[RMDB]
RNA sequence: GGGAACGACUCGAGUAGAGUCGAAAAUAAGACAGUAGGGGAGCAGUGCUCAUAAUAUUCCUACCGAGGCACAAAACGUCAUUAUAAAAUAACGUAUUGUACUUUCGUGUCUAGGUUUAGGUGCGAUAUCCUAAGUACAGUUCGCUGUACUUAGGAUAAAAGAAACAACAACAACAAC
Reactivity to 2A3 in 0.01 (KOAc 150mM, MgCl2 10mM, bicine 150mM(pH8.5), 24C), signal-to-noise 5, nucleotides 027 to 126: u130a010a020g080a020c030a020g070u070a030g020g030g030g010a020g030c070a040g130u050g130c000u000c040a020u060a120a010u060a090u180u180c010c000u000a000c000c020g000a040g010g000c000a000c000a000a050a020a010c070g020u020c020a030u020u130a100u070a170a230a060a100u160a050a020c040g020u010a020u030u060g060u070a040c020u060u090u070c030g000u010g000u000c020u020a050g020g080u100u130u090a040g000g020u020g040c020g010a010u020
Reactivity to DMS in 0.01 (KOAc 150mM, MgCl2 10mM, bicine 150mM(pH8.5), 24C), signal-to-noise 4, nucleotides 027 to 126: u010a090a080g010a060c060a140g010u000a020g000g000g000g010a040g020c040a110g010u010g020c020u000c040a050u000a040a040u010a140u010u010c010c000u000a020c010c020g010a040g010g020c020a010c000a010a020a080a010c030g010u000c040a010u000u000a160u010a070a060a060a060u000a050a030c050g010u000a060u000u000g010u010a020c020u000u000u010c070g030u010g000u000c030u000a060g010g010u010u000u000a030g010g010u010g000c080g000a140u000